[RMDB]
RNA sequence: GGGAACGACUCGAGUAGAGUCGAAAAAGUCCUGUCGCAGAUGACUUUCGCCCAUUUAUGGAACCACACUUUCUUUAAUUUGAAUUCUAUGUGGUAGGACGAGAGUCAUCUGUGACAGGAUAAUGGACUCCGCGCUACUGUUCGCAGUAGCGCGGAGAAAAGAAACAACAACAACAAC
Reactivity to 2A3 in 0.01 (KOAc 150mM, MgCl2 10mM, bicine 150mM(pH8.5), 24C), signal-to-noise 1, nucleotides 027 to 126: a000g010u000c000c000u000g030u000c010g000c000a000g000a030u000g000a000c020u000u000u000c000g020c000c000c000a090u050u130u130a220u090g220g060a050a000c000c000a000c000a050c000u000u070u000c000u020u230u300a300a300u300u020u070g000a030a000u200u000c040u300a050u120g070u000g050g000u000a140g050g000a000c000g000a000g000a000g000u000c000a000u000c000u000g000u000g000a000c000a000g000g000a000u000a000a000u110g030g000a000

An RNA of 177 nucleotides, treated with 2A3 and read out base by base. 2A3 adducts were read by reverse transcription with SuperScript II with manganese. Conditions: 150 mM KOAc, 10 mM MgCl2 and 150 mM bicine (pH 8.5), 24 C.